Notes: An RNA of 177 nucleotides, treated with DMS and 2A3 and read out base by base. The reactions ran in a buffer of 150 mM KOAc, 10 mM MgCl2 and 150 mM bicine (pH 8.5), at 24 C. DMS adducts were read by reverse transcription with MarathonRT. Reactivities are given for positions 27 through 126. The data come from the RNA Mapping Database (RMDB), library M2PK50.
[RMDB]
RNA sequence: GGGAACGACUCGAGUAGAGUCGAAAAACGGAUAGAUUCGUCUAUCCGUGCAUCUCAUUACAGACAGAGAAAGUCUGCUAAGAUCUCACUUAGAUAAAGAGAAGAGAGUCGAGUUCGCUCGACUCAAUACCACAGAGAGGUUCGCCUCUCUGUGGUAAAAAGAAACAACAACAACAAC
Reactivity to DMS in 0.01 (KOAc 150mM, MgCl2 10mM, bicine 150mM(pH8.5), 24C), signal-to-noise 2, nucleotides 027 to 126: a000c000g010g010a020u000a000g000a030u000u020c210g020u000c010u000a000u000c010c000g020u000g030c180a130u000c000u000c000a180u020u000a110c060a000g000a010c000a040g020a230g000a140a150a050g000u000c020u000g000c100u000a010a000g000a050u000c020u000c070a100c020u000u000a020g000a180u000a020a050a050g000a060g030a070a190g000a150g000a010g000u000c000g000a020g010u000u010c180g030c000u000c000g020a000c000u010c000a080a060
Reactivity to 2A3 in 0.01 (KOAc 150mM, MgCl2 10mM, bicine 150mM(pH8.5), 24C), signal-to-noise 1, nucleotides 027 to 126: a010c020g020g000a000u000a020g030a000u060u080c230g040u000c110u000a020u010c010c000g000u000g000c030a090u020c000u000c030a030u060u040a040c020a040g000a010c020a000g150a010g170a300a150a030g010u000c000u010g000c010u030a030a020g030a110u050c060u030c060a010c010u020u070a020g030a110u200a200a100a000g060a000g000a120a000g070a000g000a010g010u010c000g010a000g000u050u040c160g010c070u010c000g010a000c020u000c020a040a030